[RMDB]
RNA sequence: GGGAACGACUCGAGUAGAGUCGAAAAAAGCAUGUGUCUCUAUUGUCUCUCUAUUCAGAACUUAGUAUGGUGAUGGAUCGAUAGAGAGACAUUCCUGCAUCUGUCAUCCAUCACCAUAAAAACAAAAGUUUCUGAAAUAGUUCGCUAUUUCAGAAACAAAAGAAACAACAACAACAAC
Reactivity to 2A3 in 0.01 (KOAc 150mM, MgCl2 10mM, bicine 150mM(pH8.5), 24C), signal-to-noise 2, nucleotides 027 to 126: a000a010g130c140a160u260g090u060g080u220c010u000c010u110a100u030u050g020u000c000u020c000u000c010u000a040u140u130c020a030g090a180a080c060u110u090a110g020u130a150u040g010g010u000g000a000u000g000g000a020u070c100g010a000u010a010g000a000g000a000g000a000c000a000u000u020c000c000u040g010c010a070u080c110u180g200u100c010a020u000c000c000a000u020c030a000c000c000a000u000a000a030a010a000a000c040a030a120a050a010
Reactivity to DMS in 0.01 (KOAc 150mM, MgCl2 10mM, bicine 150mM(pH8.5), 24C), signal-to-noise 1, nucleotides 027 to 126: a100a010g010c000a130u030g010u010g010u010c030u000c010u000a130u000u000g010u000c020u000c010u000c000u010a000u000u010c190a090g010a020a050c180u020u020a130g010u000a010u000g000g000u020g000a010u000g010g010a040u000c110g000a030u000a000g010a010g000a080g040a030c030a010u010u010c050c010u000g000c110a040u010c090u030g000u010c140a070u000c000c000a000u000c000a000c000c000a000u000a010a040a050a110a030c110a070a010a110a120